[RMDB]
RNA sequence: GGGAACGACUCGAGUAGAGUCGAAAAAGCCAUUACAUUAGAAGUAUAGCUGGAGGGCCAGAGAGAUGGUUCAUCAGUUCAGAGCACUUUCUGCUCUUCCAGAGGGCCCGGGUUCAGUUCCCAGUGUCCCUGGAUGGUUCACAACCAUCUUUAACAAAGGUAUUACGUAUUUCGAUACGUAAUACCUAAAAGAAACAACAACAACAAC
Reactivity to 2A3 in 0.01 (KOAc 150mM, MgCl2 10mM, bicine 150mM(pH8.5), 24C), signal-to-noise 3, nucleotides 027 to 156: a000g050c030c000a080u110u150a060c060a070u110u140a120g050a190a020g060u080a040u070a200g070c010u010g020g010a000g030g030g010c130c080a010g000a010g000a010g020a080u100g140g000u030u020c020a070u030c050a040g080u160u170c100a020g020a000g010c000a010c040u000u090u010c030u020g000c000u010c000u080u020c000c000a000g000a020g020g020g010c040c080c050g020g010g010u090u120c090a090g030u130u030c040c000c010a010g020u040g020u100c010c010c000u000g030g010a000u000g010g030u070u120c110a040c030a090a040c010c000a000u000c000u010u080u060a100a050c100a040a120
Reactivity to DMS in 0.01 (KOAc 150mM, MgCl2 10mM, bicine 150mM(pH8.5), 24C), signal-to-noise 2, nucleotides 027 to 156: a100g020c030c020a160u010u000a070c040a150u000u000a140g000a160a180g020u000a060u010a110g000c060u000g000g000a070g000g000g050c220c040a080g010a100g000a050g000a060u000g020g020u010u000c040a090u000c080a150g030u020u010c100a120g000a030g060c020a220c040u000u020u000c020u000g030c030u000c010u010u000c010c030a040g000a160g040g000g010c010c020c040g010g020g000u000u000c090a300g010u000u000c010c000c010a130g010u000g010u000c000c020c020u000g020g010a010u000g010g010u000u010c190a130c050a050a080c000c000a020u000c000u000u020u010a090a180c110a090a190
Background
This 207-nucleotide RNA was probed chemically with 2A3 and DMS. The RNA was probed in 150 mM KOAc, 10 mM MgCl2 and 150 mM bicine (pH 8.5) at 24 C. 2A3 adducts were read by reverse transcription with SuperScript II with manganese. It was measured as part of the RMDB library OK3TST. For DMS, 2,320 sequencing reads were counted.